[RMDB]
RNA sequence: GGGAACGACUCGAGUAGAGUCGAAAAAGGAAUCAGAGCAUUUAGAGUUACCUAGGGGUUUUAUCUAAAGGUUCAGGGAAGGGAGAUUUCUGCUUCAACUCCAGCUCUGCUGGCUGCUGGGCAACAGCCAAACUUUAGGUUUCGACCUAAAGUUUGGAAAAGAAACAACAACAACAAC
Reactivity to DMS in 0.01 (KOAc 150mM, MgCl2 10mM, bicine 150mM(pH8.5), 24C), signal-to-noise 3, nucleotides 027 to 126: a050g000g010a050a040u000c030a140g020a040g010c030a060u000u010u000a030g010a070g010u000u000a030c030c020u010a160g020g010g010g010u000u000u000u000a100u010c030u000a010a040a070g010g020u000u000c040a120g010g010g010a060a070g010g010g010a090g010a100u000u000u000c020u010g010c070u010u000c070a040a060c040u010c030c000a040g000c020u020c140u020g000c030u000g000g020c090u010g020c040u000g000g020g010c030a060a080c150a100g010
Reactivity to 2A3 in 0.01 (KOAc 150mM, MgCl2 10mM, bicine 150mM(pH8.5), 24C), signal-to-noise 3, nucleotides 027 to 126: a010g080g010a040a020u060c040a070g010a010g060c030a020u010u010u070a040g010a020g030u070u070a040c030c030u100a090g300g060g000g000u030u060u110u160a110u040c020u030a000a030a040g040g000u050u070c070a030g000g030g040a050a080g030g040g010a060g010a020u030u070u030c030u050g080c000u140u150c030a040a040c010u000c010c010a000g000c010u070c050u300g010c000u000g030g000c040u020g000c000u030g000g030g010c010a050a030c030a070g040